The record gives the reactivity of an RNA of 207 nucleotides to DMS and 2A3. The data come from the RNA Mapping Database (RMDB), library OK3TST. Reactivities are given for positions 27 through 156. The RNA was probed in 150 mM KOAc, 10 mM MgCl2 and 150 mM bicine (pH 8.5) at 24 C. For DMS, 3,507 sequencing reads were counted.

RNA sequence: GGGAACGACUCGAGUAGAGUCGAAAAGACGUGGAGGUGUCGCGCCCUCCUUUGCGCGUAAGUACGUCGAAAUUCGGUGCUAUGGAUCGCACCGUCUGAUCCAUUAGAUAUCCGCUCUGUGCCGCGGUUGGGCAUUUACACUUACCCGAAAGGGGAACGGAUACUACCUAUUCGUAGGUAGUAUCCGAAAAGAAACAACAACAACAAC
Reactivity to DMS in 0.01 (KOAc 150mM, MgCl2 10mM, bicine 150mM(pH8.5), 24C), signal-to-noise 2, nucleotides 027 to 156: g020a080c010g000u010g000g010a050g000g000u010g050u000c080g010c030g010c070c020c020u020c000c030u000u000u000g010c000g030c090g010u000a090a100g020u000a020c000g040u000c010g040a070a070a130u010u010c020g030g020u000g030c020u000a280u020g000g000a060u000c040g040c030a300c100c100g000u000c020u000g020a090u010c020c000a070u000u020a030g020a220u000a080u000c020c010g040c040u000c060u000g000u010g020c040c020g040c030g000g000u000u000g020g010g040c040a060u000u000u010a140c050a090c100u010u000a190c000c000c010g000a050a040a190g020g020g010g010a060a190
Reactivity to 2A3 in 0.01 (KOAc 150mM, MgCl2 10mM, bicine 150mM(pH8.5), 24C), signal-to-noise 3, nucleotides 027 to 156: g040a000c020g020u070g000g020a020g010g030u030g010u020c010g010c020g000c030c000c020u030c000c030u070u110u070g060c070g000c030g040u080a090a070g020u030a050c040g000u020c050g050a140a000a010u090u040c050g010g000u020g000c030u050a030u140g030g040a020u040c020g030c050a060c050c040g040u010c030u040g030a010u000c010c010a040u060u100a050g070a120u120a060u070c030c050g010c030u010c010u050g030u030g020c040c010g010c010g030g000u080u060g050g000g000c000a010u040u090u080a050c080a000c040u080u120a090c000c000c000g040a100a030a020g070g010g000g010a040a020